Overview: Conditions: 150 mM KOAc, 10 mM MgCl2 and 150 mM bicine (pH 8.5), 24 C. The record gives the reactivity of an RNA of 207 nucleotides to DMS and 2A3. For DMS, 2,474 sequencing reads were counted. Values cover nucleotides 27 to 156. For DMS the reverse transcriptase was MarathonRT.
RNA sequence: GGGAACGACUCGAGUAGAGUCGAAAAGUAAAAUGAUUUACUUUCAGGUAUUAUUGAGGCAUUCAACUUGUUUAUACAAAUUUCCUGAAUAGCUGGUCAUUUUAAAUUAGUGAAGUGUACCUAAAAUUUAAGGAAACACGUAGAAGUAGUGUAGAAAUAGUAGGUAGUAUUUCGAUACUACCUACUAAAAAGAAACAACAACAACAAC
Reactivity to DMS in 0.01 (KOAc 150mM, MgCl2 10mM, bicine 150mM(pH8.5), 24C), signal-to-noise 2, nucleotides 027 to 156: g010u000a010a050a090a060u000g000a100u010u000u010a010c000u000u000u000c040a060g000g010u010a090u000u000a110u010u000g020a170g030g020c000a030u020u010c090a130a110c090u010u000g020u000u000u000a180u000a120c030a050a120a080u000u000u000c000c010u000g000a010a040u000a060g030c150u000g010g000u010c010a010u000u000u010u010a070a090a120u000u010a090g020u010g000a020a070g080u010g040u000a150c020c010u000a080a030a100a130u010u010u000a060a070g000g000a150a050a060c000a030c190g000u000a070g020a030a200g020u000a080g000u000g000u000a070g000a100a070a130
Reactivity to 2A3 in 0.01 (KOAc 150mM, MgCl2 10mM, bicine 150mM(pH8.5), 24C), signal-to-noise 2, nucleotides 027 to 156: g020u020a000a000a000a000u020g000a010u020u080u190a010c000u020u000u010c010a000g000g010u020a040u100u000a000u160u100g080a030g040g010c060a060u090u060c060a140a030c130u050u060g030u050u060u050a160u030a060c020a000a060a060u030u060u080c000c000u000g000a020a020u120a070g070c220u080g010g010u000c000a000u000u050u020u040a050a090a020u110u170a020g050u000g150a140a010g000u010g000u080a020c010c010u050a090a140a150a150u150u210u120a110a040g000g000a000a130a000c000a000c010g010u020a000g020a110a010g080u110a000g010u020g030u080a010g030a020a110a010